[RMDB]
RNA sequence: GGGAACGACUCGAGUAGAGUCGAAAACGCUGGGUAACGAGUAUCCAAAUUACGCAUAGGAGGCACUGAAGCGCGCACGGUGCUACCCACCCUAUGAACUACGUAAUUUGGAUAUGAGUUACCUGUGCUGAAGCGCGCACGGCAACCGAAAGGUGCGGAAGCAUCAUAACUUCGGUUAUGAUGCUUCAAAAGAAACAACAACAACAAC
Reactivity to 2A3 in 0.01 (KOAc 150mM, MgCl2 10mM, bicine 150mM(pH8.5), 24C), signal-to-noise 5, nucleotides 027 to 156: c050g020c020u080g010g000g000u010a020a020c020g010a050g020u010a000u010c000c000a020a000a000u000u000a010c010g000c030a000u000a000g020g010a020g040g030c000a000c000u030g040a270a040g040c020g010c010g010c040a010c020g010g000u010g010c020u120a150c020c050c020a060c010c010c000u010a010u030g050a110a080c130u180a040c300g000u000a000a000u000u000u000g000g000a000u000a000u000g000a000g000u000u000a000c000c000u000g010u030g000c010u050g010a130a030g000c010g000c000g000c010a020c000g020g000c040a080a030c030c000g100a080a040a040g060g000u050g010c040g030
Reactivity to DMS in 0.01 (KOAc 150mM, MgCl2 10mM, bicine 150mM(pH8.5), 24C), signal-to-noise 2, nucleotides 027 to 156: c050g060c050u000g000g010g000u000a020a030c020g010a300g010u000a010u000c000c020a000a010a010u000u000a000c000g000c040a070u000a010g050g020a300g000g000c000a010c000u010g000a030a060g040c030g020c030g120c070a300c090g020g000u000g050c010u000a050c020c020c040a300c130c020c000u000a060u000g000a050a170c030u000a130c020g030u000a000a040u000u000u000g000g000a010u000a000u000g000a300g000u000u000a010c000c030u000g010u030g000c020u000g000a110a050g010c030g060c010g010c000a300c080g000g050c030a130a120c030c030g000a190a160a140g020g020u000g010c040g030
Chemical mapping of a 207-nucleotide RNA with 2A3 and DMS. DMS adducts were read by reverse transcription with MarathonRT. 2A3 adducts were read by reverse transcription with SuperScript II with manganese. The reactions ran in a buffer of 150 mM KOAc, 10 mM MgCl2 and 150 mM bicine (pH 8.5), at 24 C.